Chemical mapping of a 177-nucleotide RNA with DMS and 2A3.

RNA sequence: GGGAACGACUCGAGUAGAGUCGAAAAUGGUCGGAAAGCACUGCGAAAGUGGCGAUAUCAUCGUGCGGGACACCUGGGUGCCCGACGAUAUUCGGCCCGGCGAUCUGGUUGCGGUUGCCGCCACCGGCGAACUAAUCGCUUUCGAGCGAUUAGUUCGAAAAGAAACAACAACAACAAC
Reactivity to DMS in 0.01 (KOAc 150mM, MgCl2 10mM, bicine 150mM(pH8.5), 24C), signal-to-noise 4, nucleotides 027 to 126: u000g010g010u000c020g040g000a060a140a160g010c010a030c020u000g010c140g010a100a130a080g010u000g000g010c020g000a050u000a100u010c220a050u000c020g010u000g020c020g010g000g000a090c020a020c030c090u010g010g020g040u000g000c000c010c010g010a020c010g010a010u000a080u000u000c020g000g030c030c020c020g000g000c030g000a030u000c000u010g010g010u010u010g000c150g000g010u010u000g010c020c010g010c050c060a080c050c040g010g000
Reactivity to 2A3 in 0.01 (KOAc 150mM, MgCl2 10mM, bicine 150mM(pH8.5), 24C), signal-to-noise 3, nucleotides 027 to 126: u110g030g000u060c010g000g000a130a030a010g050c010a010c050u060g040c140g160a300a060a020g040u070g070g060c030g010a040u020a030u220c090a010u010c010g070u140g300c000g020g010g050a080c020a050c050c060u260g300g070g010u060g000c000c010c000g000a010c000g000a010u000a050u040u020c010g040g030c000c040c020g010g000c010g000a040u030c020u030g080g030u070u090g040c030g000g040u170u110g120c040c000g010c010c000a020c010c010g050g000
Reactivities are given for positions 27 through 126. The RNA was probed in 150 mM KOAc, 10 mM MgCl2 and 150 mM bicine (pH 8.5) at 24 C.